[RMDB]
RNA sequence: GGGAACGACUCGAGUAGAGUCGAAAAGAUAUGGACCCUGUUGGGAGCUUAGUGUCGGAAACGACAUGGGAGCGAGGAUCAACUGGGUCCUAAGUCAAACUACGUGGGUCUUCGGACCCACGUAGAACAUUAUACAAGGGUUCGCCCUUGUAUAAUGAAAAGAAACAACAACAACAAC
Reactivity to 2A3 in 0.01 (KOAc 150mM, MgCl2 10mM, bicine 150mM(pH8.5), 24C), signal-to-noise 5, nucleotides 027 to 126: g000a000u010a000u050g000g000a000c000c000c010u000g000u010u010g000g010g020a030g000c020u050u050a060g020u010g010u000c010g000g010a010a010a000c010g020a010c010a020u060g120g300g130a030g020c020g050a210g050g000a010u010c000a010a020c050u060g020g010g000u000c000c000u000a000a000g000u000c010a010a060a130c000u000a000c000g010u000g010g000g010u010c030u140u180c300g120g010a010c010c010c010a000c000g010u000a000g000a000a000
Reactivity to DMS in 0.01 (KOAc 150mM, MgCl2 10mM, bicine 150mM(pH8.5), 24C), signal-to-noise 6, nucleotides 027 to 126: g000a020u000a020u000g000g000a020c000c000c000u000g000u000u000g010g010g000a010g030c000u010u010a300g010u000g000u000c000g020g010a010a010a030c000g010a010c000a000u000g000g010g010a010g020c010g020a090g020g010a020u010c000a010a020c010u000g010g020g020u000c000c000u000a000a070g000u000c010a170a150a300c000u000a000c000g030u000g000g000g010u000c000u000u020c270g030g000a010c000c000c000a000c010g010u000a000g000a110a220